[RMDB]
RNA sequence: GGGAACGACUCGAGUAGAGUCGAAAACGCACUGGCCACCGGUCUGAGCGUGGCGGCGAUGACCAAGGCCUUCGGGAUCGGGUUUCUCGCCCGUCCCCGCUCCACCCAAGCCGAAGCGGCGCGUGAGGCGAUUAACUCACUUCGGUGAGUUAAUCGCAAAAGAAACAACAACAACAAC
Reactivity to DMS in 0.01 (KOAc 150mM, MgCl2 10mM, bicine 150mM(pH8.5), 24C), signal-to-noise 2, nucleotides 027 to 126: c030g040c060a070c050u000g010g080c020c000a140c240c170g000g040u010c070u010g000a240g040c000g000u000g020g040c130g000g030c000g020a030u000g000a050c030c010a110a110g020g010c000c000u000u000c110g000g000g000a100u020c090g000g000g000u000u000u000c230u000c060g010c020c020c060g020u000c020c020c000c020g000c030u000c020c290a060c090c030c070a060a170g000c050c060g030a190a070g010c080g000g000c050g010c040g000u000g010a120g000
Reactivity to 2A3 in 0.01 (KOAc 150mM, MgCl2 10mM, bicine 150mM(pH8.5), 24C), signal-to-noise 5, nucleotides 027 to 126: c030g000c010a030c080u060g080g000c020c010a100c070c060g000g020u020c060u060g050a010g020c050g020u050g050g000c060g030g000c010g020a030u100g020a010c000c040a070a110g160g020c010c000u020u030c070g030g010g000a090u140c050g020g000g010u000u100u050c100u030c010g040c000c020c000g060u180c010c000c010c010g000c000u010c020c020a090c020c010c000a050a020g030c010c030g060a110a020g030c020g040g010c020g000c010g040u070g060a100g090

The record gives the reactivity of an RNA of 177 nucleotides to DMS and 2A3. Reactivities are given for positions 27 through 126. The RNA was probed in 150 mM KOAc, 10 mM MgCl2 and 150 mM bicine (pH 8.5) at 24 C. For 2A3, 4,372 sequencing reads were counted. It was measured as part of the RMDB library OK1LIB.